[RMDB]
RNA sequence: GGGAACGACUCGAGUAGAGUCGAAAAGAUAUGGAUAGUCCAGACAUGAAGAUCGGAAACGAUACUUCAACAGCUGGCUAUCCUAAGUCAAAAGGACAAAAUUCCUCUUCGGAGGAAUUUUGUCCAAGUGGACAUAUAUCUUCGGAUAUAUGUCCACAAAAGAAACAACAACAACAAC
Reactivity to DMS in 0.01 (KOAc 150mM, MgCl2 10mM, bicine 150mM(pH8.5), 24C), signal-to-noise 2, nucleotides 027 to 126: g010a050u000a300u000g000g000a020u000a030g000u000c010c010a000g010a100c080a300u000g000a000a010g000a050u000c000g000g000a100a100a140c000g010a000u000a090c000u000u000c000a020a070c280a140g000c000u000g010g020c000u000a000u000c000c000u010a020a040g000u000c010a100a100a160a140g000g000a010c010a000a020a010a010u000u000c000c000u000c000u000u010c170g030g010a000g000g020a000a000u000u000u010u000g000u000c000c010a010a020
Reactivity to 2A3 in 0.01 (KOAc 150mM, MgCl2 10mM, bicine 150mM(pH8.5), 24C), signal-to-noise 1, nucleotides 027 to 126: g020a010u050a010u080g000g010a000u010a000g040u140c040c020a000g050a080c050a040u070g010a000a000g000a000u010c000g050g030a040a010a040c000g030a030u110a300c000u000u000c000a050a050c050a060g030c010u010g000g000c000u010a000u000c010c000u000a040a010g040u040c020a000a020a080a270g040g000a010c000a010a010a000a000u010u010c020c000u060c020u040u130c300g080g000a000g000g000a020a000u000u010u010u020g000u000c010c000a000a000

Overview:
The record gives the reactivity of an RNA of 177 nucleotides to DMS and 2A3. The 2A3 profile rests on 2,370 reads. It was measured as part of the RMDB library TTRDEL. For DMS, 1,369 sequencing reads were counted. For 2A3 the reverse transcriptase was SuperScript II with manganese. Values cover nucleotides 27 to 126. The RNA was probed in 150 mM KOAc, 10 mM MgCl2 and 150 mM bicine (pH 8.5) at 24 C.